[RMDB]
The record gives the reactivity of an RNA of 177 nucleotides to DMS and 2A3.
For DMS, 1,089 sequencing reads were counted.
Source: RMDB library OK1LIB, as collected in RNAgym.
2A3 adducts were read by reverse transcription with SuperScript II with manganese.
RNA sequence: GGGAACGACUCGAGUAGAGUCGAAAAGUGUUCGAAGUGGAUACCCGAAUUAAGCAUAAUCCCAUCUGAACGGUGUAUGCCAAUCAAUUGUCGUCACUCAGAAGGACAGUAGCCUGGCCGUAGCUCGCGUGUGACACCGAUUCGUCGGUGUCACACGAAAAGAAACAACAACAACAAC
Reactivity to DMS in 0.01 (KOAc 150mM, MgCl2 10mM, bicine 150mM(pH8.5), 24C), signal-to-noise 1, nucleotides 027 to 126: g000u000g000u000u000c040g030a080a040g000u020g000g000a030u030a000c090c000c020g000a080a140u040u050a130a000g000c140a250u000a120a190u000c050c000c000a140u080c000u100g000a080a080c030g000g030u000g000u000a000u000g000c000c050a010a030u020c180a100a040u000u000g020u040c050g020u010c080a230c150u030c000a080g000a060a030g000g000a050c000a030g010u000a070g000c010c010u000g040g000c050c000g040u000a140g000c030u000c100g000
Reactivity to 2A3 in 0.01 (KOAc 150mM, MgCl2 10mM, bicine 150mM(pH8.5), 24C), signal-to-noise 2, nucleotides 027 to 126: g000u030g000u020u100c010g050a140a030g010u070g060g010a030u030a040c010c010c010g000a060a000u080u070a200a020g000c020a070u070a020a040u160c000c000c000a060u000c000u020g050a150a140c030g000g020u100g000u010a040u190g160c010c010a000a090u050c100a070a090u170u090g000u000c020g080u060c020a100c040u080c040a050g030a220a010g080g010a020c060a030g000u000a000g100c030c040u070g000g000c020c000g010u070a020g000c050u100c050g080